[RMDB]
RNA sequence: GGGAACGACUCGAGUAGAGUCGAAAAUCCACUAUGAAUCUAGUCACUAAAUAAACACAAUUAGUUACUGUGUGUAAUAGUGAGUGUUGAUAACACAAAAUAAUAGUAUAGUUUUGGAAGAUUAUACGCGCCCUUGCUCCGUUCGCGGAGCAAGGAACAUUGAGCGGUAGUUCGCUACCGCUCAAUGAAAAGAAACAACAACAACAAC
Reactivity to 2A3 in 0.01 (KOAc 150mM, MgCl2 10mM, bicine 150mM(pH8.5), 24C), signal-to-noise 3, nucleotides 027 to 156: u070c040c000a010c020u060a070u070g150a150a050u020c010u010a020g010u000c010a010c020u000a010a020a150u210a030a230a030c070a030c050a120a170u050u020a010g030u020u050a030c020u010g030u020g000u010g020u180a010a010u000a000g010u010g070a040g020u000g030u020u040g170a300u150a210a020c030a000c030a020a090a040a050u210a080a060u080a100g010u010a010u020a000g000u010u020u080u220g110g030a100a050g000a070u000u040a010u010a020c040g050c000g070c050c000c020u000u000g010c000u000c000c010g020u060u060c130g000c010g120g010a010g000c000a000a000g000g000a000a000
Reactivity to DMS in 0.01 (KOAc 150mM, MgCl2 10mM, bicine 150mM(pH8.5), 24C), signal-to-noise 1, nucleotides 027 to 156: u010c040c000a140c080u000a060u000g000a250a130u010c080u020a140g050u000c020a020c020u010a020a010a070u010a080a180a020c010a030c000a010a100u000u010a150g010u000u020a050c080u000g010u000g020u000g020u000a110a180u000a020g030u000g010a080g020u000g000u000u010g000a110u020a110a150c130a110c070a100a080a040a140u000a140a300u000a100g020u010a050u000a030g020u000u050u000u040g030g000a100a150g000a060u000u000a030u000a020c020g010c100g000c100c000c000u000u000g030c000u000c000c000g030u000u000c240g010c020g070g000a020g000c010a020a000g000g000a040a020